[RMDB]
RNA sequence: GGGAACGACUCGAGUAGAGUCGAAAAGCAGACAAAGUUCCUUGCUCUCAUGGAACUUGAAUCAAGUGAGGAGAGAGACAAUAAGCAGUGACAUAGUAAGUCGUGCUGUGUUAGAACUGGUACGCGCUGCAGGAAAAAGAUCAAAUUGGAGCAGGGAUAAUAGCUCAUCGUUCGCGAUGAGCUAUUAAAAAGAAACAACAACAACAAC
Reactivity to 2A3 in 0.01 (KOAc 150mM, MgCl2 10mM, bicine 150mM(pH8.5), 24C), signal-to-noise 3, nucleotides 027 to 156: g020c040a010g040a120c050a030a080a040g050u030u010c000c000u000u020g030c010u010c010u050c050a030u090g040g030a040a030c000u030u080g040a020a050u090c060a130a070g050u080g110a050g000g040a040g010a000g000a010g020a040c010a040a050u160a160a020g010c000a010g030u010g060a040c010a070u110a030g080u150a180a070g040u040c030g060u040g000c010u040g030u020g020u100u090a070g090a090a020c010u030g010g010u050a020c010g030c000g000c010u020g020c010a010g030g000a040a060a040a000a000g050a020u130c080a020a060a070u110u070g000g000a000g000c000a010g030g000g000a000
Reactivity to DMS in 0.01 (KOAc 150mM, MgCl2 10mM, bicine 150mM(pH8.5), 24C), signal-to-noise 2, nucleotides 027 to 156: g050c070a080g020a160c100a070a100a040g040u000u000c020c000u000u010g010c040u000c080u010c110a080u000g010g000a070a050c000u000u020g000a110a170u000c040a120a080g000u000g000a050g030g030a150g000a100g020a090g000a170c070a060a120u010a060a140g020c020a080g030u020g010a020c020a090u020a090g010u020a060a130g020u010c050g060u010g010c000u000g030u000g010u000u000a090g010a050a120c050u000g040g000u000a060c060g070c010g010c040u010g020c010a040g040g000a020a070a050a040a060g000a130u010c100a030a090a150u010u000g040g000a140g030c010a070g000g020g010a120